[RMDB]
RNA sequence: GGGAACGACUCGAGUAGAGUCGAAAAGAUGUGGUCAGCUUACAGUUGUAAUUGCUACUCGUACACUCUCUCUUGGUAUCAACAUGCCAUGCCGAACUGUGGUAUUUUUGGGAGAUAGUUUACAGCUUAACGCCUUGAAUUUCCAUCAAGCCGCUGAAUACGACUGAGUAUUCGUACUCAGUCGUAUAAAAGAAACAACAACAACAAC
Reactivity to DMS in 0.01 (KOAc 150mM, MgCl2 10mM, bicine 150mM(pH8.5), 24C), signal-to-noise 4, nucleotides 027 to 156: g020a100u010g010u000g020g020u000c040a100g010c040u000u000a120c070a080g020u000u000g030u000a080a120u010u000g000c020u000a080c030u000c080g020u010a090c060a070c060u000c020u000c010u000c010u000u000g010g020u000a040u010c030a060a060c120a100u000g020c010c020a100u000g000c100c030g010a040a060c050u000g020u000g010g020u000a020u010u000u010u000u000g010g010g010a070g020a080u000a070g010u000u010u000a040c030a080g010c010u000u010a050a110c040g000c030c020u000u000g000a050a120u000u000u000c050c020a150u000c020a020a080g010c030c020g040c030u000g000a110
Reactivity to 2A3 in 0.01 (KOAc 150mM, MgCl2 10mM, bicine 150mM(pH8.5), 24C), signal-to-noise 7, nucleotides 027 to 156: g070a040u090g010u050g030g020u080c050a010g010c030u080u090a080c060a090g020u010u010g020u060a040a090u100u130g020c010u030a030c020u030c090g080u140a040c050a030c040u040c000u000c000u010c010u030u060g050g020u070a060u100c050a080a160c030a110u140g030c020c010a040u080g090c060c040g110a180a110c110u080g030u060g030g050u030a100u030u140u040u080u090g050g020g000a030g010a030u020a020g020u000u040u020a020c010a000g000c010u050u040a060a020c060g020c020c010u010u000g020a050a060u070u050u030c020c010a020u020c010a030a000g030c010c020g000c070u040g040a040